[RMDB]
RNA sequence: GGGAACGACUCGAGUAGAGUCGAAAAAGCAGACUGGACCUUCUGUCUAAGUAGCUGGAGUUGACCUUUGACUGGGGUGGAUGUAGCGCUGGGACCCAGGAUUUGCUUCUUCCUCAUGGUCCUUGCUCUCUGCAGCUGUAGCAGGUCUUCUGUGAUAACUGCUAGGAUGAUUCGUCAUCCUAGCAGUAAAAGAAACAACAACAACAAC
Reactivity to DMS in 0.01 (KOAc 150mM, MgCl2 10mM, bicine 150mM(pH8.5), 24C), signal-to-noise 2, nucleotides 027 to 156: a060g020c000a040g000a060c080u000g020g010a080c030c060u010u000c050u000g010u010c030u010a060a130g020u000a040g000c030u000g000g030a110g010u000u010g010a110c060c050u000u000u000g030a210c150u010g000g000g010g020u000g040g020a090u000g040u020a040g020c200g030c040u010g000g010g010a040c030c020c200a050g000g000a100u000u010u000g010c130u000u010c130u000u000c020c020u060c060a140u030g000g010u000c010c020u020u000g010c030u000c030u010c000u000g010c040a090g000c050u000g040u020a090g030c050a060g000g000u000c020u000u010c040u010g020u020g010a150u010a090
Reactivity to 2A3 in 0.01 (KOAc 150mM, MgCl2 10mM, bicine 150mM(pH8.5), 24C), signal-to-noise 3, nucleotides 027 to 156: a020g000c010a010g020a080c120u220g010g030a010c050c000u040u080c030u070g240u060c050u080a090a130g060u070a030g080c030u040g020g040a050g030u100u110g050a050c010c000u080u060u130g130a140c150u120g000g000g010g010u050g010g090a090u120g070u160a000g030c030g000c100u050g010g030g010a030c000c000c010a010g040g010a050u100u100u220g120c020u110u060c010u050u040c030c000u000c050a080u140g020g020u020c010c000u010u020g010c010u010c000u000c030u020g090c010a020g000c010u060g030u070a020g000c050a000g000g000u000c000u030u010c010u010g010u020g050a030u140a120